[RMDB]
RNA sequence: GGGAACGACUCGAGUAGAGUCGAAAAGCAAAGAAAUUUUAUCCCAAUAAGGCGAAGUAAGCAAGUCGUCCCAACGCGAGGGCGCUAGCGAGCUUACGAGCCCUAGCAGAAUAAUCGCGAGAAAAAACGUUGUUGUAUUCUUCGGAAUACAACAACGAAAAGAAACAACAACAACAAC
Reactivity to 2A3 in 0.01 (KOAc 150mM, MgCl2 10mM, bicine 150mM(pH8.5), 24C), signal-to-noise 1, nucleotides 027 to 126: g030c040a060a070a000g120a010a190a060u090u140u080u060a160u110c040c000c000a000a070u150a050a020g010g010c010g030a040a020g020u020a000a010g000c010a000a000g090u070c000g000u020c010c000c010a170a140c070g000c020g060a140g000g000g000c000g010c020u040a030g030c030g100a010g010c030u000u020a010c040g000a010g000c000c000c000u000a000g000c000a010g070a200a060u110a110a070u030c030g000c000g030a040g140a080a130a000a000a000a010
Reactivity to DMS in 0.01 (KOAc 150mM, MgCl2 10mM, bicine 150mM(pH8.5), 24C), signal-to-noise 1, nucleotides 027 to 126: g000c210a070a070a050g010a100a040a110u010u000u020u020a070u010c050c000c020a080a090u050a050a190g000g030c000g000a100a130g030u000a000a000g020c010a070a060g000u000c000g030u000c000c000c040a070a160c060g020c120g010a050g030g040g000c070g030c260u000a020g020c110g020a290g000c000u000u000a000c040g000a230g000c000c000c000u010a000g000c110a110g010a070a110u000a090a020u000c050g000c040g040a260g030a010a000a020a010a130a190
The record gives the reactivity of an RNA of 177 nucleotides to 2A3 and DMS. For 2A3 the reverse transcriptase was SuperScript II with manganese. It was measured as part of the RMDB library M2PK90.